Structure probing data (2A3 and DMS) for a 177-nucleotide construct.
The data come from the RNA Mapping Database (RMDB), library TTRDES.
For 2A3, 7,247 sequencing reads were counted.
Values cover nucleotides 27 to 126.
The DMS profile rests on 4,294 reads.
RNA sequence: GGGAACGACUCGAGUAGAGUCGAAAAGAUAUGGAGGGAGAUUGGGAGCGAUGGAUCGGAAACGAUCCAGUCGCGAAGAACAAUUCUCCCUCCUAAGUCAAAGCUCCAAACGUUCGCGUUUGGAGCACUUACGAAAUACCUUCGGGUAUUUCGUAAGAAAAGAAACAACAACAACAAC
Reactivity to 2A3 in 0.01 (KOAc 150mM, MgCl2 10mM, bicine 150mM(pH8.5), 24C), signal-to-noise 3, nucleotides 027 to 126: g010a010u040a020u100g000g000a010g010g000g000a020g010a030u010u040g080g000g110a300g030c000g000a010u030g000g000a000u010c000g010g010a010a030a020c010g000a000u030c010c000a010g170u050c000g000c020g000a140a040g040a060a010c000a000a000u190u060c010u000c000c000c000u000c000c000u010a000a010g000u000c020a030a090a090g000c020u010c010c000a000a000a000c020g080u130u130c300g010c000g160u010u000u000g000g000a000g000c000a000
Reactivity to DMS in 0.01 (KOAc 150mM, MgCl2 10mM, bicine 150mM(pH8.5), 24C), signal-to-noise 3, nucleotides 027 to 126: g000a030u000a230u010g000g000a020g000g000g010a010g010a030u010u010g010g010g010a140g020c010g020a120u000g000g000a000u000c000g010g000a050a030a150c000g020a000u000c000c000a000g010u000c000g040c000g020a080a150g000a180a230c010a010a010u010u020c000u000c000c000c000u000c000c000u000a000a070g000u010c020a150a160a130g020c000u000c000c000a000a000a000c000g030u010u010c300g020c010g020u000u000u000g010g000a000g000c000a000